Notes
The record gives the reactivity of an RNA of 177 nucleotides to DMS and 2A3. For DMS the reverse transcriptase was MarathonRT.

RNA sequence: GGGAACGACUCGAGUAGAGUCGAAAAGCGCGAAGACUUGACGCGUUGCUAUAUAGUUGAAUAAUUAUAUCGCUUCGGAUAUAUUUUAAUCUUCUAUAUGAAGAUGUCUUGUCGAAAGCGCGAAGAAGGGAAAUGUUAACUUCGGUUAACAUUUCCCAAAAGAAACAACAACAACAAC
Reactivity to DMS in 0.01 (KOAc 150mM, MgCl2 10mM, bicine 150mM(pH8.5), 24C), signal-to-noise 2, nucleotides 027 to 126: g000c000g010c030g000a170a280g000a000c010u020u000g030a030c020g010c020g010u050u030g000c150u030a000u000a030u000a000g000u000u000g000a060a120u020a020a000u000u000a000u030a000u000c000g010c250u020u060c190g000g020a040u000a000u010a000u050u000u020u000a000a100u010c000u020u000c000u000a010u000a000u050g000a110a100g000a050u020g000u000c010u000u000g000u000c020g000a040a120a300g020c000g020c000g000a080a120g020a180a170
Reactivity to 2A3 in 0.01 (KOAc 150mM, MgCl2 10mM, bicine 150mM(pH8.5), 24C), signal-to-noise 3, nucleotides 027 to 126: g000c000g010c000g010a060a000g020a010c020u030u030g010a030c020g030c030g100u060u050g020c000u020a030u000a000u000a000g050u030u000g050a100a060u120a100a000u000u010a000u010a000u010c000g050c220u240u190c120g100g000a000u000a000u020a000u010u000u010u040a040a020u000c020u000u000c000u000a060u000a010u130g010a030a050g020a050u100g000u020c000u000u000g010u010c010g200a190a050a020g000c000g000c000g000a000a030g120a060a090
For DMS, 1,829 sequencing reads were counted. The 2A3 profile rests on 1,472 reads. Reactivities are given for positions 27 through 126. The RNA was probed in 150 mM KOAc, 10 mM MgCl2 and 150 mM bicine (pH 8.5) at 24 C.